[RMDB]
RNA sequence: GGGAACGACUCGAGUAGAGUCGAAAACAAACAAACAAACAAAUGGUCCGCGAAAUUAGAAAGCACAAAGCACCUAAAAGAAAGGUGCAAAGUGCAGAAGUUAGUCGCGCCCUUACUUCUGCCAAAACCGCAUAGCUAAUUUCGAUUAGCUAUGCGGAAAAGAAACAACAACAACAAC
Reactivity to 2A3 in 0.01 (KOAc 150mM, MgCl2 10mM, bicine 150mM(pH8.5), 24C), signal-to-noise 3, nucleotides 027 to 126: c040a000a110a000c010a010a210a010c050a050a170a000c010a000a110a130u180g050g020u170c100c030g000c000g100a000a060a000u050u060a120g090a180a120a010g020c070a030c050a020a150a000g000c000a000c030c010u090a080a150a160a000g290a150a070a000g050g000u000g000c000a020a000a020g100u170g010c000a000g000a000a000g000u050u210a020g010u080c000g000c010g030c080c010c010u020u050a020c000u060u000c000u020g030c050c030a110a100a000a000
Reactivity to DMS in 0.01 (KOAc 150mM, MgCl2 10mM, bicine 150mM(pH8.5), 24C), signal-to-noise 2, nucleotides 027 to 126: c050a050a160a120c130a070a040a110c290a110a180a120c220a090a060a140u000g010g000u000c080c010g100c060g080a000a080a020u000u060a080g000a190a180a010g000c100a070c090a000a080a160g010c080a010c010c000u000a220a000a070a130g080a130a160a050g010g030u000g090c000a010a020a140g000u000g030c020a000g000a220a060g020u000u000a020g000u000c000g000c070g000c300c070c000u000u000a060c000u000u000c000u080g000c000c010a000a000a030a100